[RMDB]
RNA sequence: GGGAACGACUCGAGUAGAGUCGAAAAGGAGCUCGGGAUGCUCUAAAUCCUAGGAAGAGCAUCCGUACGCUCUUCCUUACCACCAGAGCGUAUUGAAGUGUUGGUGGUUUUGAGACACUUCAGUGAGGGCUCAAAAGGACAUUGCUCUUACCGAGCACGAGACGUCUAUGUUCGCAUAGACGUUUCGAAAAGAAACAACAACAACAAC
Reactivity to DMS in 0.01 (KOAc 150mM, MgCl2 10mM, bicine 150mM(pH8.5), 24C), signal-to-noise 5, nucleotides 027 to 156: g010g030a070g010c010u000c050g030g010g020a060u000g010c010u000c020u000a070a070a120u000c060c040u000a150g020g010a120a040g010a020g000c010a080u010c040c160g010u000a040c160g010c000u000c000u000u010c000c030u000u000a120c060c050a120c060c060a100g000a030g020c010g020u000a070u010u000g010a060a080g010u010g020u000u000g010g020u000g030g020u000u000u000u010g010a270g000a040c020a030c010u000u000c030a090g010u000g010a090g010g010g020c000u000c040a030a060a070a100g000g010a100c100a120u000u010g010c010u000c020u000u000a140c070c060g010a100g020c030a190
Reactivity to 2A3 in 0.01 (KOAc 150mM, MgCl2 10mM, bicine 150mM(pH8.5), 24C), signal-to-noise 6, nucleotides 027 to 156: g100g010a030g010c030u040c080g050g030g010a020u060g000c000u000c000u010a110a100a060u090c040c050u070a070g050g040a030a020g000a000g000c010a020u050c050c030g010u030a010c040g000c010u010c000u010u010c000c000u000u030a050c010c020a020c000c020a020g000a010g030c020g020u050a050u030u050g030a040a020g010u020g030u060u050g040g100u080g090g000u070u010u080u090g020a010g000a000c020a010c010u010u010c020a030g010u030g090a080g020g100g000c000u000c010a030a050a000a000g040g000a040c050a100u050u090g000c000u000c000u030u070a120c060c070g000a000g000c010a000
The record gives the reactivity of an RNA of 207 nucleotides to DMS and 2A3. It was measured as part of the RMDB library OK3TST. 2A3 adducts were read by reverse transcription with SuperScript II with manganese. Values cover nucleotides 27 to 156.